RNA sequence: GGGAACGACUCGAGUAGAGUCGAAAACAACGGCUAACGUUGAGUACCCUCGAUCUCUGGCCCACUGUCCCGAUACGAUUAUUCGGGGUCAGCUGUUUGUAAGUCCCGUAUUCAACUUGUGCCGCACGUGCAAACAAUGUUUCGACAUUGUUUGCACAAAAGAAACAACAACAACAAC
Reactivity to DMS in 0.01 (KOAc 150mM, MgCl2 10mM, bicine 150mM(pH8.5), 24C), signal-to-noise 3, nucleotides 027 to 126: c060a090a120c020g000g040c060u000a080a070c150g020u020u010g000a020g010u020a080c020c060c040u000c040g020a030u010c010u000c020u000g000g020c020c050c060a140c080u000g000u000c000c020c020g000a010u020a050c250g000a100u020u020a080u010u020c030g000g000g010g000u010c030a070g010c120u040g030u010u010u020g000u020a100a080g000u020c030c050c040g000u010a050u010u000c020a020a040c060u000u020g000u000g010c010c010g000c120a120c190
Reactivity to 2A3 in 0.01 (KOAc 150mM, MgCl2 10mM, bicine 150mM(pH8.5), 24C), signal-to-noise 8, nucleotides 027 to 126: c030a020a020c000g010g010c030u100a080a010c080g010u000u030g010a010g020u030a030c000c020c020u030c030g090a120u020c040u000c010u040g030g010c010c020c010a080c080u100g030u030c000c010c000g010a020u040a080c100g070a100u100u140a090u130u200c010g030g000g000g000u020c000a010g000c040u040g040u080u120u080g090u090a070a030g060u100c020c020c010g000u020a050u010u040c010a010a020c000u040u060g050u070g060c010c000g030c030a050c120